[RMDB]
Chemical mapping of a 207-nucleotide RNA with 2A3 and DMS. It was measured as part of the RMDB library RNAMAK. 2A3 adducts were read by reverse transcription with SuperScript II with manganese. The reactions ran in a buffer of 150 mM KOAc, 10 mM MgCl2 and 150 mM bicine (pH 8.5), at 24 C.

RNA sequence: GGGAACGACUCGAGUAGAGUCGAAAAGCCUGUUUCGACAGGCAGUUGGUCCUAAGUCGUGCACUAUCCCUGUUGUCAGCUCCACUCGGAAACGAGUGAGAGCUUGGAUUUACAGGGACGAAUGCACGAUAUGGAAUGGUACAGGGUUCGCCCUGAAUUAUAGUAAGAAGUUCGCUUCUUACUAUAAAAAAGAAACAACAACAACAAC
Reactivity to 2A3 in 0.01 (KOAc 150mM, MgCl2 10mM, bicine 150mM(pH8.5), 24C), signal-to-noise 2, nucleotides 027 to 156: g010c000c010u000g020u010u180u120c210g100a040c030a010g010g020c010a010g030u050u100g040g070u080c000c000u050a150a020g010u010c010g020u000g020c010a000c040u050a000u000c000c000c010u000g060u000u020g020u020c000a000g000c010u000c000c000a000c000u010c010g060g050a130a110a080c050g020a000g010u010g040a110g010a000g000c020u000u040g000g010a010u140u100u300a010c000a010g010g020g000a000c020g000a030a060u010g000c000a000c000g010a000u000a000u010g000g040a030a110u140g040g000u110a060c010a000g060g000g000u050u120c150g060c050c000c000u010g010a020a020
Reactivity to DMS in 0.01 (KOAc 150mM, MgCl2 10mM, bicine 150mM(pH8.5), 24C), signal-to-noise 3, nucleotides 027 to 156: g020c010c010u010g010u000u000u000c180g020a090c020a020g030g060c010a050g000u000u000g010g000u000c040c000u010a110a300g000u010c020g020u000g000c010a020c050u000a170u000c000c010c000u000g010u000u000g010u000c020a060g010c000u010c010c000a010c000u000c000g020g000a150a160a250c010g010a020g020u000g000a100g010a010g010c010u000u000g010g010a050u000u000u000a030c020a020g020g010g000a000c020g020a060a050u010g000c000a030c010g010a010u000a120u010g020g000a060a170u010g010g000u000a090c020a040g000g020g010u000u000c100g000c040c010c000u030g000a060a110
For DMS the reverse transcriptase was MarathonRT. For DMS, 12,080 sequencing reads were counted.